Chemical mapping of a 207-nucleotide RNA with 2A3 and DMS. The reactions ran in a buffer of 150 mM KOAc, 10 mM MgCl2 and 150 mM bicine (pH 8.5), at 24 C. For 2A3, 2,201 sequencing reads were counted. Reactivities are given for positions 27 through 156. For DMS, 3,830 sequencing reads were counted. 2A3 adducts were read by reverse transcription with SuperScript II with manganese.
[RMDB]
RNA sequence: GGGAACGACUCGAGUAGAGUCGAAAAUCAAGAGCAUGACGCGCAGCGCGAUAUGCCGCGCGUGGACGGUGGCCUCCUAUCGGGCGCGGCGUUAGUCAUGGACCCGGCGAGUAAGAGCGUGAACUUUGCGCGUGAGGCGGCCCGGCGUCCCGUCGCCGGGUAACGUCAUGUUCGCAUGACGUUACCCAAAAGAAACAACAACAACAAC
Reactivity to 2A3 in 0.01 (KOAc 150mM, MgCl2 10mM, bicine 150mM(pH8.5), 24C), signal-to-noise 3, nucleotides 027 to 156: u120c040a020a040g030a030g100c060a020u040g050a060c020g050c020g020c070a050g030c030g010c020g090a070u060a050u260g030c020c000g020c020g010c040g080u100g000g060a020c050g110g050u070g040g010c020c020u030c000c020u120a110u150c080g050g070g010c030g000c020g000g030c020g010u080u090a040g020u030c030a040u050g010g050a060c000c000c000g020g010c000g000a060g040u100a100a020g050a030g110c020g010u040g070a110a100c120u160u110u190g020c040g010c020g020u080g020a050g040g000c010g010g020c040c050c000g060g000c020g030u010c000c010c000g100u080c010g010c030c030
Reactivity to DMS in 0.01 (KOAc 150mM, MgCl2 10mM, bicine 150mM(pH8.5), 24C), signal-to-noise 2, nucleotides 027 to 156: u010c090a100a120g000a140g040c000a090u020g020a030c010g000c010g030c020a090g000c040g030c090g020a210u000a090u010g000c030c000g020c000g030c030g040u010g020g000a060c050g030g020u000g020g030c020c040u000c010c020u000a110u000c030g010g020g030c030g030c030g000g010c010g000u000u010a120g010u000c010a120u000g060g000a110c010c020c010g020g020c070g010a060g000u010a060a120g000a080g040c010g020u000g010a110a070c110u000u000u000g020c010g000c000g000u000g020a130g010g000c060g040g000c020c010c030g030g000c070g020u000c050c050c010g000u010c020g010c040c020